[RMDB]
RNA sequence: GGGAACGACUCGAGUAGAGUCGAAAAUCUCAACGGAGAAGACAACUGAAGAACCAGCGUGGCUGCAGGAUGUCGAAAAUACCACAGAACGGGCUGGUCGCGCACAAGAUAAAGAAGAUCUAAUGGAACGGCUUCGCGAUCUUGGCUAUAUGUAAUCAGGAAGAUUACGAUUCGUCGUAAUCUUCCUAAAAGAAACAACAACAACAAC
Reactivity to DMS in 0.01 (KOAc 150mM, MgCl2 10mM, bicine 150mM(pH8.5), 24C), signal-to-noise 1, nucleotides 027 to 156: u000c020u000c000a130a160c150g020g000a070g050a050a110g040a050c010a060a110c150u010g010a100a090g000a150a080c020c030a090g000c000g060u000g020g020c020u000g030c040a240g010g050a140u000g030u000c070g040a050a060a150a120u000a210c030c000a030c080a110g030a090a070c050g030g050g020c000u000g060g000u000c000g000c120g020c070a080c060a080a120g000a060u000a110a100a250g010a060a050g000a070u000c020u000a070a140u030g000g010a020a130c020g030g030c000u000u000c020g010c120g000a040u000c020u000u000g000g000c050u000a140u010a110u000g050u010a010a070u000c130
Reactivity to 2A3 in 0.01 (KOAc 150mM, MgCl2 10mM, bicine 150mM(pH8.5), 24C), signal-to-noise 2, nucleotides 027 to 156: u000c000u000c010a020a120c100g050g070a100g020a130a030g010a010c030a070a040c110u120g020a160a030g010a140a050c070c010a010g010c060g120u050g060g020c010u010g020c020a060g030g010a050u100g020u120c020g050a040a000a010a000u200a060c050c000a000c000a030g020a090a030c020g000g050g000c000u000g020g000u000c030g010c000g000c040a070c010a110a000g010a120u170a090a150a010g090a030a000g080a060u020c050u110a070a220u200g050g060a060a000c080g000g060c000u010u010c010g000c070g090a020u000c010u010u020g000g010c000u080a060u010a020u230g130u110a040a030u250c080

Source: RMDB library OK3TST, as collected in RNAgym. An RNA of 207 nucleotides, treated with DMS and 2A3 and read out base by base. For DMS, 1,462 sequencing reads were counted. For 2A3, 959 sequencing reads were counted. The reactions ran in a buffer of 150 mM KOAc, 10 mM MgCl2 and 150 mM bicine (pH 8.5), at 24 C. For 2A3 the reverse transcriptase was SuperScript II with manganese.